[RMDB]
RNA sequence: GGGAACGACUCGAGUAGAGUCGAAAAGCCGUGCUUGUGCGUUCAGAUUUCAGGCGUCGAUUCUCACAAGAUCGCGGUGAAGUUCUCCCAGGGCAGACCCGCUAAAACUUUACUGGGAUCGCCGUAUGUUUUCCUUGCCCGUCGGGUAGCAUGCGGUCAUAGUGCUUCUCUUCGGAGAAGCACUAUGAAAAGAAACAACAACAACAAC
Reactivity to 2A3 in 0.01 (KOAc 150mM, MgCl2 10mM, bicine 150mM(pH8.5), 24C), signal-to-noise 1, nucleotides 027 to 156: g020c000c030g000u000g050c000u010u020g000u000g040c010g010u020u060c080a100g020a100u070u120u240c110a060g100g060c070g050u030c000g030a080u080u000c030u010c010a000c000a000a050g040a060u120c030g040c010g030g020u050g020a060a010g040u020u000c020u010c070c030c010a010g000g010g010c000a000g030a110c050c030c020g000c130u130a040a060a040a200c050u080u210u240a060c020u070g000g010g030a050u110c070g000c000c000g000u010a000u000g010u020u000u050u140c020c040u060u170g060c000c020c060g180u200c100g030g000g020u010a000g000c000a010u020g000c000g000g000u000

Annotation: The record gives the reactivity of an RNA of 207 nucleotides to 2A3. For 2A3 the reverse transcriptase was SuperScript II with manganese. For 2A3, 910 sequencing reads were counted. The RNA was probed in 150 mM KOAc, 10 mM MgCl2 and 150 mM bicine (pH 8.5) at 24 C. It was measured as part of the RMDB library RSTRND.